[RMDB]
RNA sequence: GGGAACGACUCGAGUAGAGUCGAAAAGAUAUGGAUUCCGAUGGAGUGUGCGAAGUCGGAAACGACGAUGUAUACACGCGAAACAUCGGGAAUCCUAAGUCAAAACGCGAGAGUUCGCUCUCGCGAACACUCAUACGGGGUUCGCCCCGUAUGAGUGAAAAGAAACAACAACAACAAC
Reactivity to 2A3 in 0.01 (KOAc 150mM, MgCl2 10mM, bicine 150mM(pH8.5), 24C), signal-to-noise 2, nucleotides 027 to 126: g020a010u040a010u070g010g010a000u030u000c010c010g000a000u000g000g050a260g050u030g000u010g000c050g060a220a020g000u000c000g000g000a000a010a020c010g020a020c000g010a050u300g060u090a130u040a100c030a010c010g040c040g190a190a080a010c000a020u010c020g070g060g070a010a030u000c000c000u010a020a010g000u000c040a000a010a110a230c020g000c010g010a000g000a000g030u140u160c290g070c160u010c000u000c010g000c010g000a010a010
Reactivity to DMS in 0.01 (KOAc 150mM, MgCl2 10mM, bicine 150mM(pH8.5), 24C), signal-to-noise 3, nucleotides 027 to 126: g010a040u000a200u000g000g010a030u000u000c000c000g000a010u010g000g000a100g020u000g010u000g000c030g000a130a200g030u000c000g010g010a030a060a050c020g000a020c000g010a110u010g000u000a130u020a200c020a020c020g030c160g000a120a080a130c000a000u000c010g010g010g010a010a020u000c000c000u000a020a090g000u000c020a100a040a100a190c020g020c020g000a010g010a030g010u000u020c220g010c010u000c010u000c000g000c010g000a070a090
This 177-nucleotide RNA was probed chemically with 2A3 and DMS. Source: RMDB library TTRDEL, as collected in RNAgym. For DMS the reverse transcriptase was MarathonRT. The RNA was probed in 150 mM KOAc, 10 mM MgCl2 and 150 mM bicine (pH 8.5) at 24 C.